Structure probing data (DMS and 2A3) for a 177-nucleotide construct. Source: RMDB library M2PK50, as collected in RNAgym. 2A3 is a SHAPE reagent: it acylates the 2'-hydroxyl of flexible nucleotides of all four kinds. The DMS profile rests on 4,470 reads.
[RMDB]
RNA sequence: GGGAACGACUCGAGUAGAGUCGAAAAGACAAUCAGUUCGCUGAUUGUCAAAAGAGCAGCUAUGAGCUCAAGUGUGAUAGCAAAAGAUCGAAAGAUCAAAAAAAAGCAGAUACUUCGGUAUCUGCAACGUAUUAAGCAUGUUCGCAUGCUUAAUACGAAAAGAAACAACAACAACAAC
Reactivity to DMS in 0.01 (KOAc 150mM, MgCl2 10mM, bicine 150mM(pH8.5), 24C), signal-to-noise 4, nucleotides 027 to 126: g000a030c010a010a000u000c000a010g000u000u010c290g030c000u000g010a010u000u000g000u000c000a020a070a110a140g000a010g020c010a180g000c020u000a020u000g010a050g000c010u000c010a110a100g010u000g020u010g000a020u000a020g000c010a120a060a100a110g010a000u000c000g010a120a060a160g010a010u010c020a000a000a000a060a050a050a090a120g020c000a000g000a000u000a000c000u000u000c240g020g010u000a000u000c000u000g010c000a010a010
Reactivity to 2A3 in 0.01 (KOAc 150mM, MgCl2 10mM, bicine 150mM(pH8.5), 24C), signal-to-noise 3, nucleotides 027 to 126: g000a000c000a000a010u000c000a000g030u040u100c160g010c130u000g000a010u000u000g000u000c000a010a020a010a020g010a000g010c020a000g020c000u030a010u060g100a020g010c010u070c220a140a120g220u200g000u000g150a010u020a010g000c010a030a030a070a080g010a020u020c010g020a030a040a040g000a010u000c000a000a020a040a010a000a010a040a020g000c000a000g000a000u010a000c010u030u060c190g110g000u000a000u010c000u010g000c000a000a000